RNA sequence: GGGAACGACUCGAGUAGAGUCGAAAAGCCUGGGAUCUCUACGGGGGAGCGGGUGUUUUCGCGGCGGUGCUCGGUGACGCGGUGGGGGAGUCGGGACGGGUCUUGAGCGUGGACACCGCGCGCGCGGCAUUAGCUGACCUUUCGAGGUCAGCUAAUGAAAAGAAACAACAACAACAAC
Reactivity to 2A3 in 0.01 (KOAc 150mM, MgCl2 10mM, bicine 150mM(pH8.5), 24C), signal-to-noise 5, nucleotides 027 to 126: g050c020c020u030g070g030g030a120u050c050u020c050u140a100c070g010g000g010g010g030a070g020c050g010g050g010u050g080u030u080u050u100c050g000c020g070g020c020g020g010u090g010c030u020c030g070g010u080g010a030c020g010c040g070g030u160g040g000g000g010g030a090g030u080c030g010g010g030a060c040g040g010g000u020c010u080u170g050a050g020c040g010u090g020g000a020c030a020c040c010g010c000g030c000g000c010g010c010g050g000
Reactivity to DMS in 0.01 (KOAc 150mM, MgCl2 10mM, bicine 150mM(pH8.5), 24C), signal-to-noise 3, nucleotides 027 to 126: g010c030c020u010g020g000g000a050u010c040u020c090u020a110c150g010g000g000g000g020a130g010c040g020g000g020u000g010u000u010u020u010c030g010c070g000g000c050g020g020u000g010c060u020c030g010g000u010g000a090c090g020c020g000g030u030g000g010g000g000g000a110g040u020c060g010g000g010a070c110g000g010g020u000c050u020u020g010a090g030c040g010u020g010g020a110c060a040c000c010g000c040g000c030g020c040g010c110g000g000
Description:
Structure probing data (2A3 and DMS) for a 177-nucleotide construct. In probing experiments dimethyl sulfate is read out at A N1 and C N3, which are open when not base-paired. The reactions ran in a buffer of 150 mM KOAc, 10 mM MgCl2 and 150 mM bicine (pH 8.5), at 24 C. It was measured as part of the RMDB library OK1LIB. The DMS profile rests on 7,226 reads.